[RMDB]
RNA sequence: GGGAACGACUCGAGUAGAGUCGAAAAAAAAACAAGAGUUUACCCUGAUCCAGGCUUAUGGUACAUUCCCAUUCCAAGAGAAACUGUAUCAUCAUCUGAGGAAAAGUAAGUUUUUUCUGGUAGUAUACUUUGUAUAUCAAGAUAUGUUAACAAGAAAAAAUAUAUUACGUUUCGACGUAAUAUAUUUAAAAGAAACAACAACAACAAC
Reactivity to DMS in 0.01 (KOAc 150mM, MgCl2 10mM, bicine 150mM(pH8.5), 24C), signal-to-noise 1, nucleotides 027 to 156: a060a100a040a020a120c040a060a120g020a170g030u010u000u000a090c080c000c010u000g000a180u010c030c010a160g050g030c060u000u010a090u000g000g000u000a030c020a070u000u000c010c010c010a250u000u000c200c140a120a070g010a050g010a020a030a030c110u000g040u010a040u000c010a040u000c190a080u000c020u000g040a060g020g000a090a030a050a120g010u000a070a120g020u010u000u010u000u000u000c020u010g010g000u000a040g010u000a010u000a010c010u000u010u010g010u000a100u000a090u000c000a020a020g020a030u000a010u010g000u000u000a020a000c000a020a100g010a020a010a040
Reactivity to 2A3 in 0.01 (KOAc 150mM, MgCl2 10mM, bicine 150mM(pH8.5), 24C), signal-to-noise 1, nucleotides 027 to 156: a000a000a000a000a000c120a060a080g060a060g110u120u190u110a090c050c000c010u020g060a000u030c030c000a000g060g070c090u030u030a000u100g010g000u000a000c000a040u040u040c060c000c000a020u140u030c000c000a060a000g150a000g020a070a010a010c020u000g020u010a010u030c010a000u000c010a020u010c000u020g040a060g030g010a090a020a000a000g010u120a060a030g000u100u000u000u000u020u060c000u000g060g010u000a050g020u010a030u020a060c030u080u150u180g040u090a100u040a030u280c030a020a020g040a040u100a020u290g020u180u170a020a130c070a070a000g300a050a030a230

The data come from the RNA Mapping Database (RMDB), library OK3TST. Chemical mapping of a 207-nucleotide RNA with DMS and 2A3. DMS adducts were read by reverse transcription with MarathonRT. The 2A3 profile rests on 485 reads. 2A3 adducts were read by reverse transcription with SuperScript II with manganese.